[RMDB]
Record summary:
An RNA of 177 nucleotides, treated with 2A3 and DMS and read out base by base. The DMS profile rests on 1,241 reads. The RNA was probed in 150 mM KOAc, 10 mM MgCl2 and 150 mM bicine (pH 8.5) at 24 C. The 2A3 profile rests on 528 reads. For DMS the reverse transcriptase was MarathonRT.
RNA sequence: GGGAACGACUCGAGUAGAGUCGAAAAGAAUGUCUGUAAACCGUGUGGCACACAAUGGCUAUUCAGGAAUCGUUCUGAGGAAACAGGUAAAAUGGAAGAAAGCCAAAUCCUUAGCACACGGAAGAAAAUUUAAUCGCCUCUUCGGAGGCGAUUAAAUAAAAGAAACAACAACAACAAC
Reactivity to 2A3 in 0.01 (KOAc 150mM, MgCl2 10mM, bicine 150mM(pH8.5), 24C), signal-to-noise 1, nucleotides 027 to 126: g090a100a000u120g000u090c140u030g100u140a000a050a080c000c000g000u000g040u000g050g230c000a050c000a000c000a070a110u080g020g060c000u060a150u100u060c000a000g180g000a030a000u090c000g050u120u040c010u050g060a020g050g080a230a000a000c000a000g030g000u080a140a130a040a000u040g050g000a020a040g040a160a150a000g080c050c000a040a040a040u000c000c000u000u010a000g000c000a000c000a000c000g040g050a010a010g130a000a130a000
Reactivity to DMS in 0.01 (KOAc 150mM, MgCl2 10mM, bicine 150mM(pH8.5), 24C), signal-to-noise 2, nucleotides 027 to 126: g000a120a140u050g000u000c100u020g000u000a070a120a120c010c000g020u010g050u000g070g120c090a080c140a070c300a000a030u000g000g000c030u000a180u000u000c020a080g050g000a150a070u050c120g060u000u020c040u000g060a020g000g000a130a050a050c070a040g040g020u020a000a100a070a040u040g020g000a130a060g010a020a020a160g000c040c000a000a030a040u020c050c020u000u050a150g040c000a000c010a020c030g020g000a160a100g000a090a150a060